[RMDB]
RNA sequence: GGGAACGACUCGAGUAGAGUCGAAAAUUAUGGGUGAGUCGAUCCUAAGGUCUGGGUUAACUCUCUCUAAUAAGCUUACUAGGUGCAUGGAUCGAAAGUGAAGUGUACUCUCAACUAGUAAGCUUAUCCUGUGACAAUGAUUCGUCAUUGUCACAGGAAAAGAAACAACAACAACAAC
Reactivity to DMS in 0.01 (KOAc 150mM, MgCl2 10mM, bicine 150mM(pH8.5), 24C), signal-to-noise 1, nucleotides 027 to 126: u010u000a130u010g000g000g000u000g000a000g000u000c090g070a000u010c000c000u030a180a100g020g000u070c250u000g040g040g000u000u000a020a050c000u010c000u010c000u000c100u040a190a020u000a000a000g000c000u000u000a000c000u050a000g000g000u000g000c000a000u000g000g020a080u000c040g000a150a160a100g000u000g000a300a210g050u000g000u000a000c080u000c160u070c300a150a300c040u000a000g000u000a000a000g000c050u000u000a000u000
Reactivity to 2A3 in 0.01 (KOAc 150mM, MgCl2 10mM, bicine 150mM(pH8.5), 24C), signal-to-noise 4, nucleotides 027 to 126: u080u070a110u180g000g020g000u030g000a000g010u040c050g030a010u040c010c000u040a070a050g300g070u060c100u070g000g020g010u000u010a010a020c000u010c000u000c000u020c000u030a080a060u050a120a000g000c000u000u010a000c000u000a010g060g040u000g000c000a000u010g000g000a000u010c010g040a040a050a030g010u000g000a010a010g000u010g020u020a020c000u000c010u010c030a070a090c010u000a000g000u000a000a000g000c000u000u000a000u000